[RMDB]
Chemical mapping of a 207-nucleotide RNA with 2A3 and DMS. 2A3 adducts were read by reverse transcription with SuperScript II with manganese. The RNA was probed in 150 mM KOAc, 10 mM MgCl2 and 150 mM bicine (pH 8.5) at 24 C. For DMS the reverse transcriptase was MarathonRT. The 2A3 profile rests on 7,777 reads.

RNA sequence: GGGAACGACUCGAGUAGAGUCGAAAACGGCAAAAAAGCAAACUUGACCACCAAGGAUAAAAGAGAUCUUAUCCAAGGAUGCAAAAGAUAAUCUCACUUUUGACACCCACUGAUCUCCAACUUAAAGAAAACCGAGACUACUUCGGUAGUCUCGGAAGUUAUACUUUCAGUUCGCUGAAAGUAUAACAAAAGAAACAACAACAACAAC
Reactivity to 2A3 in 0.01 (KOAc 150mM, MgCl2 10mM, bicine 150mM(pH8.5), 24C), signal-to-noise 7, nucleotides 027 to 156: c020g040g010c060a020a020a020a060a070a050g100c050a120a100a070c060u070u070g050a140c000c030a020c020c020a060a050g020g000a030u050a060a050a030a010g040a000g000a010u010c010u020u030a020u040c040c030a040a040g030g000a020u060g000c000a010a020a010a010g020a050u130a210a200u150c070u050c100a030c020u040u020u020u030g080a080c020a050c020c010c010a050c090u060g010a020u010c010u000c020c010a060a080c060u120u210a140a050a030g070a030a110a040a010c000c000g000a000g000a000c000u000a000c000u020u040c100g050g000u000a000g000u000c000u000c000g000g000a000a000
Reactivity to DMS in 0.01 (KOAc 150mM, MgCl2 10mM, bicine 150mM(pH8.5), 24C), signal-to-noise 2, nucleotides 027 to 156: c080g000g030c060a020a090a080a090a070a050g000c050a120a090a090c080u000u000g010a220c140c030a050c040c010a010a250g040g010a070u010a020a070a070a060g000a150g010a100u010c010u000u000a050u000c110c040a080a300g010g020a020u010g000c010a020a060a050a050g000a080u000a040a120u000c050u010c110a100c010u010u000u000u000g010a160c050a040c000c000c000a190c110u000g020a030u000c010u000c000c010a050a070c050u020u000a050a050a100g000a050a030a090a160c000c020g020a020g000a030c000u000a000c010u000u010c300g080g000u000a000g050u010c000u000c000g000g010a000a020